[RMDB]
RNA sequence: GGGAACGACUCGAGUAGAGUCGAAAAACUAUCGCUAUGAUAUCCGCGUCGCCGUCCUCAACUUCUGCAUAUUGUUCCGCGUCCAUUUCAAAAUGUUUUUCCGGCUCCUUGCUUACGUUGUCGAUCCGGUGAUAUUUCUGUACGCGUGAUUUUUGAGGUAGUACGUAAGGUUCGCCUUACGUACUACAAAAGAAACAACAACAACAAC
Reactivity to 2A3 in 0.01 (KOAc 150mM, MgCl2 10mM, bicine 150mM(pH8.5), 24C), signal-to-noise 3, nucleotides 027 to 156: a010c090u140a120u170c020g000c060u080a070u270g030a040u060a080u130c040c000g040c030g020u050c020g000c010c010g040u050c000c040u060c020a050a090c030u090u060c020u100g030c040a060u070a080u160u180g070u140u060c030c010g020c020g030u020c030c020a040u030u100u160c060a110a150a040a070u060g050u010u040u000u060u010c010c010g000g010c030u040c010c010u070u080g050c010u080u060a080c030g100u060u090g060u050c010g000a040u050c020c020g000g010u070g010a000u020a060u110u120u010c040u040g040u040a020c020g020c020g110u110g070a070u020u110u050u050u110g040a060g070
Reactivity to DMS in 0.01 (KOAc 150mM, MgCl2 10mM, bicine 150mM(pH8.5), 24C), signal-to-noise 2, nucleotides 027 to 156: a060c070u000a080u000c020g020c040u010a100u030g000a140u000a030u000c050c040g050c090g070u000c030g020c010c010g090u000c020c000u010c050a060a080c040u000u000c020u000g030c020a070u000a100u000u000g020u000u000c040c030g040c060g010u000c060c020a110u010u010u000c110a060a060a060a080u020g030u020u000u020u000u010c030c020g030g010c050u000c030c020u000u000g000c000u000u010a150c090g020u000u000g030u000c020g020a120u010c030c020g040g030u000g000a070u000a070u000u000u010c060u000g040u000a050c070g040c040g000u010g000a110u000u000u000u000u000g000a260g030

Chemical mapping of a 207-nucleotide RNA with 2A3 and DMS.
DMS adducts were read by reverse transcription with MarathonRT.
For 2A3, 1,753 sequencing reads were counted.
Reactivities are given for positions 27 through 156.
It was measured as part of the RMDB library OK3TST.